[RMDB]
RNA sequence: GGGAACGACUCGAGUAGAGUCGAAAAGAGUGAAUGAGCUUUCAGGAGGAGGCUGGUGCAGGCAGGGGUAGGAGCCAACGACGGCGAACGGGAGGCACUGGCCUCCAGAGCCGUGGCCAAGGUGGGCUCGGUAGACGUUGUUCGCAACGUCUACCGAAAAAGAAACAACAACAACAAC
Reactivity to DMS in 0.01 (KOAc 150mM, MgCl2 10mM, bicine 150mM(pH8.5), 24C), signal-to-noise 1, nucleotides 027 to 126: g000a140g030u000g020a090a070u000g000a090g000c050u000u010u000c060a210g000g000a120g010g000a050g000g030c020u010g000g070u000g000c050a070g000g030c070a080g000g000g000g010u000a080g000g000a160g040c080c040a060a070c210g010a050c110g000g020c030g050a050a040c130g020g020g000a120g000g020c020a060c070u000g020g000c000c010u020c010c000a030g000a080g000c010c030g030u000g020g000c030c060a040a150g010g000u000g000g000g000c100